[RMDB]
RNA sequence: GGGAACGACUCGAGUAGAGUCGAAAACUAUUGUGGUUCGCCACAAUAGGCAGGGCUGUUUUUCUCGCUGACUUUCAGCCCCAAACAAAAAAGUCAGCAUAAUUGUACUGCGCUUCGGCGCAGUAAAGACAAUAGCGUGUUUCGACACGCUAUUGUCAAAAGAAACAACAACAACAAC
Reactivity to DMS in 0.01 (KOAc 150mM, MgCl2 10mM, bicine 150mM(pH8.5), 24C), signal-to-noise 1, nucleotides 027 to 126: c010u000a010u010u000g030u000g010g000u000u010c220g010c000c000a000c000a020a000u000a000g010g010c250a140g000g000g010c000u000g000u000u000u000u000u000c060u030c300g000c000u000g010a020c000u000u000u000c010a000g020c010c010c000c190a010a000a190c050a000a010a010a010a020a050g010u000c000a000g010c000a000u000a050a080u000u000g000u000a040c010u000g000c010g000c010u000u010c120g000g000c000g040c000a010g010u000a000a020a070
Reactivity to 2A3 in 0.01 (KOAc 150mM, MgCl2 10mM, bicine 150mM(pH8.5), 24C), signal-to-noise 1, nucleotides 027 to 126: c000u020a000u010u000g000u000g000g040u050u060c180g080c050c000a010c000a010a000u000a000g010g000c050a020g000g020g040c000u010g000u000u020u000u000u010c090u060c120g020c010u000g000a010c010u000u000u010c000a000g010c000c000c000c070a030a050a020c020a010a020a010a000a000a000g010u020c000a010g010c000a000u010a000a000u010u060g000u000a000c000u000g000c060g000c000u050u040c220g120g000c000g000c000a000g000u000a000a010a010